RNA sequence: GGGAACGACUCGAGUAGAGUCGAAAAGGAAAUAGGUAUGCGGUCGCUAUUAAAAUAUUGCGACAAACUGGCACACAGCAAGCGAGUGGUGACGAGUGCACACAAGUCGUUCCCAGCGAGAAAAAAAGGAUCAGUAAUAGUUCGCUAUUACUGAUCCAAAAGAAACAACAACAACAAC
Reactivity to DMS in 0.01 (KOAc 150mM, MgCl2 10mM, bicine 150mM(pH8.5), 24C), signal-to-noise 2, nucleotides 027 to 126: g010g000a050a050a080u010a020g000g020u010a060u000g020c090g000g010u000c010g020c010u000a090u000u010a080a110a100a090u000a060u000u000g010c020g000a020c010a030a060a100c110u000g000g010c030a050c070a070c080a090g000c070a080a050g030c030g010a070g030u000g010g020u000g010a110c040g030a080g010u010g000c030a050c070a080c090a090a020g000u000c000g000u000u000c000c000c000a090g000c230g000a120g010a010a010a040a050a030a090a110
Reactivity to 2A3 in 0.01 (KOAc 150mM, MgCl2 10mM, bicine 150mM(pH8.5), 24C), signal-to-noise 2, nucleotides 027 to 126: g030g010a000a130a070u130a100g030g010u110a060u080g050c060g040g020u010c000g000c040u030a000u050u160a070a070a070a090u270a050u100u120g000c000g020a000c010a000a030a010c040u050g050g020c030a020c000a000c010a050g010c010a070a000g060c030g050a040g040u040g000g060u020g040a010c020g000a030g040u120g050c040a020c010a000c010a060a020g010u010c010g000u000u000c000c020c000a000g020c030g040a060g100a040a090a040a010a010a020a030
An RNA of 177 nucleotides, treated with DMS and 2A3 and read out base by base. It was measured as part of the RMDB library M2PK90. The 2A3 profile rests on 2,950 reads. DMS adducts were read by reverse transcription with MarathonRT. The RNA was probed in 150 mM KOAc, 10 mM MgCl2 and 150 mM bicine (pH 8.5) at 24 C. 2A3 adducts were read by reverse transcription with SuperScript II with manganese. Values cover nucleotides 27 to 126.